[RMDB]
RNA sequence: GGGAACGACUCGAGUAGAGUCGAAAAAUACAGCGCCUUACCGUUGCUGUCUUUUAUACUGGUCUUCCAUGCAGCACGAACCUGCUCAACAACGUUAUCCGGCAGGCUGGCGUAGUCCAGAUCAUUCGACUCCUGACGCUUUCGAGCGUCAGGAGUCAAAAGAAACAACAACAACAAC
Reactivity to 2A3 in 0.01 (KOAc 150mM, MgCl2 10mM, bicine 150mM(pH8.5), 24C), signal-to-noise 1, nucleotides 027 to 126: a050u240a000c130a000g010c000g000c000c000u040u120a030c000c000g050u130u240g090c000u050g040u100c030u000u290u000u010a160u130a060c010u100g090g000u090c040u170u030c050c100a060u210g050c040a040g000c000a000c100g000a000a030c030c030u000g000c040u010c180a000a200c100a090a060c130g010u020u020a040u180c000c000g000g000c000a030g000g000c000u030g000g030c000g070u000a050g000u110c000c000a020g000a050u050c040a050u000u070c000